[RMDB]
RNA sequence: GGGAACGACUCGAGUAGAGUCGAAAAGAUAUGGAUGUGUGUUGAAUACAUAGCGAAGAACUCGGAAACGAGGGAGCUAUUAAUUCACUCACACAUCCUAAGUCAAACGGAUUCUUCGGAAUCCGAACACGAAGUAUAUCUUCGGAUAUACUUCGUGAAAAGAAACAACAACAACAAC
Reactivity to DMS in 0.01 (KOAc 150mM, MgCl2 10mM, bicine 150mM(pH8.5), 24C), signal-to-noise 8, nucleotides 027 to 126: g000a040u000a300u000g000g000a010u000g010u000g010u000g010u000u000g000a030a010u000a140c300a040u000a000g000c000g000a090a120g000a090a210c010u000c000g000g000a130a100a180c000g000a010g000g000g000a060g010c000u000a000u000u000a130a080u000u000c000a010c210u000c000a000c000a000c000a000u000c000c000u000a020a050g000u000c030a070a100a280c020g000g000a010u000u000c000u000u020c180g020g000a010a000u000c000c000g010a040a120
Reactivity to 2A3 in 0.01 (KOAc 150mM, MgCl2 10mM, bicine 150mM(pH8.5), 24C), signal-to-noise 6, nucleotides 027 to 126: g030a030u070a040u180g000g000a000u000g000u000g000u000g000u040u010g010a000a000u030a040c090a040u000a010g000c020g220a300a030g020a110a060c000u000c010g020g030a080a060a040c010g000a010g010g010g000a020g000c000u010a010u010u040a030a100u010u010c010a020c040u040c010a000c000a000c000a000u000c000c000u000a050a000g040u030c030a110a030a050c010g000g010a000u010u010c010u070u070c300g120g010a010a000u000c000c000g000a030a010
Notes: Structure probing data (DMS and 2A3) for a 177-nucleotide construct. Reactivities are given for positions 27 through 126. 2A3 adducts were read by reverse transcription with SuperScript II with manganese. The RNA was probed in 150 mM KOAc, 10 mM MgCl2 and 150 mM bicine (pH 8.5) at 24 C.